[RMDB]
RNA sequence: GGGAACGACUCGAGUAGAGUCGAAAACUGGAGUCUGCCUUCUGCCUUCUCCCUUCUCAGGUGACAUCACAGUGGAAGGUCUGGAUGGAGAGCGGCCACUGCAGACUGGGGAAGUGGUCAUCAUUGUGGUGGUGUUGCUCAUGUGGGCUGGUGAGUAAUUUAGGCCUGGAUUCGUCCAGGCCUAAAUAAAAGAAACAACAACAACAAC
Reactivity to 2A3 in 0.01 (KOAc 150mM, MgCl2 10mM, bicine 150mM(pH8.5), 24C), signal-to-noise 1, nucleotides 027 to 156: c030u000g060g000a010g040u000c040u030g000c000c000u010u000c040u110g050c020c040u030u000c010u050c000c010c000u090u030c160u080c120a170g000g040u090g070a100c030a060u050c020a060c010a050g080u130g260g000a010a010g080g000u000c080u110g010g040a040u040g030g020a020g000a000g030c010g010g000c020c020a040c020u010g000c000a010g000a100c040u060g000g000g000g060a040a110g060u050g170g020u000c000a030u030c040a040u040u150g010u020g090g000u000g050g000u070g050u050u150g000c000u000c040a070u110g050u060g030g000g050c000u010g000g050u070g050a100g040u150a070

The record gives the reactivity of an RNA of 207 nucleotides to 2A3. The reactions ran in a buffer of 150 mM KOAc, 10 mM MgCl2 and 150 mM bicine (pH 8.5), at 24 C.